[RMDB]
RNA sequence: GGGAACGACUCGAGUAGAGUCGAAAACAGUGGGUUCGCCCACUGAAAAAAGCGUACUACGUGGAGGCAAUUAGCUUGGACCUUCUCCCAAAUAGGAGAAGCUAGCUGGGUUGCUCCCCACCCACGUAUCGCAAAAAGCCUAACUUCGGUUAGGCAAGAGUCAGGAUAAAUUCGUUUAUCCUGACUCAAAAGAAACAACAACAACAAC
Reactivity to 2A3 in 0.01 (KOAc 150mM, MgCl2 10mM, bicine 150mM(pH8.5), 24C), signal-to-noise 5, nucleotides 027 to 156: c010a000g010u010g000g050g000u060u060c160g190c020c000c030a040c040u050g000a040a000a000a010a000a000g040c030g030u080a060c010u000a000c060g020u010g000g000a020g000g000c010a010a010u040u030a030g000c010u030u100g070g070a150c030c000u010u000c020u050c020c040c010a170a300a260u290a160g000g000a000g000a000a000g000c010u010a000g000c010u070g170g080g000u010u010g010c010u100c060c020c010c000a030c000c000c000a010c010g000u020a040u300c020g010c020a020a020a020a100a020g000c000c010u010a000a000c010u040u060c250g070g000u000u000a000g000g010c000a000a000
Reactivity to DMS in 0.01 (KOAc 150mM, MgCl2 10mM, bicine 150mM(pH8.5), 24C), signal-to-noise 3, nucleotides 027 to 156: c010a040g010u020g010g050g040u000u000c300g020c010c000c000a000c010u000g000a000a030a060a110a060a090g020c020g010u010a090c150u000a060c050g000u010g010g000a150g000g020c010a020a030u000u000a060g020c000u000u000g060g000a100c220c010u000u000c000u000c000c000c020a060a120a200u000a040g000g020a020g010a020a010g020c030u010a020g010c040u010g000g020g000u000u000g000c010u000c050c010c000c030a160c110c000c020a040c040g000u000a030u000c030g030c020a020a040a050a130a170g010c000c000u010a000a020c000u010u000c300g060g010u000u000a010g030g060c000a010a000